[RMDB]
RNA sequence: GGGAACGACUCGAGUAGAGUCGAAAAUGUGGGCCCCGUCUUGAAACACGGACCAAGGAGUGCAUGUGCGCAGCGAGUCCGCUCCGCGGCGCAGCGAAGGCCAUCGAGCUGCGCACAUGCGACCCGAUAGGCAGUGAACUACGCCUGGGCAGGGCGAGUUUAAGGAGAUGUUCGCAUCUCCUUAAACAAAAGAAACAACAACAACAAC
Reactivity to DMS in 0.01 (KOAc 150mM, MgCl2 10mM, bicine 150mM(pH8.5), 24C), signal-to-noise 2, nucleotides 027 to 156: u000g010u010g010g050g070c000c020c000c030g010u020c030u000u000g000a240a130a140c090a070c040g000g000a300c290c020a090a240g000g020a100g020u020g000c010a000u020g020u000g010c010g020c020a030g020c020g000a230g010u000c010c080g000c000u000c030c020g010c020g020g010c170g000c040a090g040c050g000a070a150g000g000c020c020a010u010c070g010a300g020c000u000g000c020g000c010a020c040a000u020g010c000g010a020c020c020c000g010a080u000a030g020g040c030a230g000u000g000a100a140c030u000a110c000g030c050c010u020g000g000g030c060a080g010g000g020c050g010a100
Reactivity to 2A3 in 0.01 (KOAc 150mM, MgCl2 10mM, bicine 150mM(pH8.5), 24C), signal-to-noise 3, nucleotides 027 to 156: u180g010u130g010g080g000c050c010c010c000g010u030c030u060u120g090a120a090a020c030a010c060g000g070a060c030c050a060a110g030g000a150g010u130g010c000a000u000g000u000g000c000g000c000a020g010c000g000a010g070u050c030c010g000c010u060c070c030g060c050g120g000c110g000c120a020g070c000g020a080a080g040g040c060c020a080u110c050g040a040g000c010u000g000c010g000c010a010c000a000u000g010c000g000a000c000c000c000g070a100u100a060g060g000c050a030g010u000g090a040a030c030u100a020c130g010c010c000u040g020g030g000c080a050g010g010g010c020g030a040
Conditions: 150 mM KOAc, 10 mM MgCl2 and 150 mM bicine (pH 8.5), 24 C. Structure probing data (DMS and 2A3) for a 207-nucleotide construct. Values cover nucleotides 27 to 156. For DMS the reverse transcriptase was MarathonRT. For 2A3, 1,993 sequencing reads were counted.